Structure probing data (2A3 and DMS) for a 207-nucleotide construct.
It was measured as part of the RMDB library RNAMAK.
For 2A3 the reverse transcriptase was SuperScript II with manganese.
For DMS the reverse transcriptase was MarathonRT.
The RNA was probed in 150 mM KOAc, 10 mM MgCl2 and 150 mM bicine (pH 8.5) at 24 C.

RNA sequence: GGGAACGACUCGAGUAGAGUCGAAAAGAUGUCUUUCGAGACAUCCAUUUUCCUAAGUCAACGACUAUCAACUUGUCAGCUGUUAUCGGAAACGAUAGACAGCUUGGAUUUAGUUGACGAAUCGUUGAUAUGGAUAGAAACAGGAUUCGUCCUGUAACAUUCGCACAAGUUUCGACUUGUGCGAAUGAAAAGAAACAACAACAACAAC
Reactivity to 2A3 in 0.01 (KOAc 150mM, MgCl2 10mM, bicine 150mM(pH8.5), 24C), signal-to-noise 5, nucleotides 027 to 156: g020a000u010g010u050c030u090u210u290c300g120a020g000a040c000a000u000c000c000a030u150u080u070u020c000c010u030a130a070g020u000c010a000a000c010g020a020c040u090a030u040c000a010a000c010u020u020g010u020c000a000g000c000u010g010u040u000a000u000c010g050g030a090a060a070c010g010a000u020a050g210a060c000a000g000c000u000u060g040g000a010u130u120u220a000g000u000u020g010a010c030g050a100a300u000c000g020u010u000g000a000u010a060u120g060g010a030u080a200g200a060a120a000c000a000g030g000a020u060u110c220g070u050c060c010u000g000u030a030a020
Reactivity to DMS in 0.01 (KOAc 150mM, MgCl2 10mM, bicine 150mM(pH8.5), 24C), signal-to-noise 2, nucleotides 027 to 156: g010a030u000g020u010c000u000u000u010c300g020a050g030a030c030a000u000c000c060a300u000u000u000u000c000c000u000a050a250g010u000c010a000a030c000g000a040c010u000a060u000c020a020a010c010u010u000g000u000c000a100g010c000u000g030u000u000a030u000c000g000g000a260a160a230c010g020a020u000a050g000a020c030a010g030c020u000u020g020g000a010u010u010u010a020g050u000u000g030a020c050g040a040a050u000c030g030u000u010g000a010u000a220u020g000g010a150u000a110g000a180a150a090c000a030g000g000a110u000u010c300g040u000c000c000u000g030u010a060a180